[RMDB]
RNA sequence: GGGAACGACUCGAGUAGAGUCGAAAAUUGUUCUCACUUCGGAGAAAGGUUGGCCAAACAACAGGUUUGCAUUGGGCCACACUGAGGGGUGCAGGGAAAAAUUUAAACAUGUAUAUAUCCGUCGUGAGCGUCAUUAUCAGUUCGCUGAUAAUGACGCAAAAGAAACAACAACAACAAC
Reactivity to DMS in 0.01 (KOAc 150mM, MgCl2 10mM, bicine 150mM(pH8.5), 24C), signal-to-noise 1, nucleotides 027 to 126: u000u050g000u080u030c000u000c000a160c000u030u000c060g040g000a020g000a130a090a100g070g010u080u000g010g000c080c060a040a060a190c020a100a040c060a070g040g000u060u000u000g000c090a080u000u020g050g000g020c070c000a050c160a120c000u010g000a140g000g000g000g030u000g000c180a040g000g020g010a010a010a090a060a090u000u010u000a140a050a130c110a110u040g010u000a030u000a150u020a120u000c000c050g020u000c060g000u000g000a150
Reactivity to 2A3 in 0.01 (KOAc 150mM, MgCl2 10mM, bicine 150mM(pH8.5), 24C), signal-to-noise 2, nucleotides 027 to 126: u040u000g020u050u000c000u000c010a000c000u000u000c010g020g000a020g040a060a100a020g080g000u060u040g090g000c040c040a030a100a020c020a000a060c020a210g170g090u050u020u090g040c030a060u020u060g050g000g000c010c000a000c000a010c030u040g030a140g000g090g000g000u090g000c060a020g000g050g000a030a030a030a060a100u140u170u100a100a080a070c050a070u050g080u010a020u000a020u020a050u140c000c000g040u030c020g010u000g020a000
An RNA of 177 nucleotides, treated with DMS and 2A3 and read out base by base. Values are in units of 0.01, from 0 to 300, in steps of 10. DMS adducts were read by reverse transcription with MarathonRT. For 2A3, 1,230 sequencing reads were counted. The DMS profile rests on 1,300 reads. Values cover nucleotides 27 to 126.